Chemical mapping of a 177-nucleotide RNA with 2A3 and DMS.
Values cover nucleotides 27 to 126.
DMS adducts were read by reverse transcription with MarathonRT.
For 2A3 the reverse transcriptase was SuperScript II with manganese.
Conditions: 150 mM KOAc, 10 mM MgCl2 and 150 mM bicine (pH 8.5), 24 C.
Source: RMDB library OK1LIB, as collected in RNAgym.
RNA sequence: GGGAACGACUCGAGUAGAGUCGAAAAUCGGGAGCAUUGGGUUUGGAGGAUUGUGAUUGAGUUGAGGGUUUUGCCGAUGCUAUCGGGGGUUUGAAAGCAUUCCAAACUCGGGCGUACCCUCGAUUUAGUAUAUUAAUUUUUUCGAAAAUUAAUAUACAAAAGAAACAACAACAACAAC
Reactivity to 2A3 in 0.01 (KOAc 150mM, MgCl2 10mM, bicine 150mM(pH8.5), 24C), signal-to-noise 2, nucleotides 027 to 126: u120c010g020g000g010a030g020c040a070u080u100g030g010g000u060u060u030g030g020a000g050g040a060u060u040g040u020g080a150u120u040g020a050g030u010u040g040a030g030g020g000u000u030u100u140g000c000c000g050a040u040g030c050u070a040u090c050g010g000g000g000g020u050u000u090g050a040a000a000g090c020a050u020u100c020c000a000a010a080c030u010c000g010g000g000c010g010u020a000c000c010c000u010c000g000a000u000u040u000a000
Reactivity to DMS in 0.01 (KOAc 150mM, MgCl2 10mM, bicine 150mM(pH8.5), 24C), signal-to-noise 3, nucleotides 027 to 126: u020c040g010g020g010a060g020c080a060u020u010g010g010g010u010u020u010g010g010a040g010g000a040u010u010g000u000g000a070u010u010g000a050g010u000u000g000a050g000g000g000u010u010u010u030g010c010c020g010a060u000g010c080u010a050u010c070g000g010g000g000g010u000u010u020g000a060a060a090g010c110a050u010u030c060c050a070a040a060c030u000c020g030g000g000c030g010u000a030c020c010c000u000c010g000a030u000u000u010a100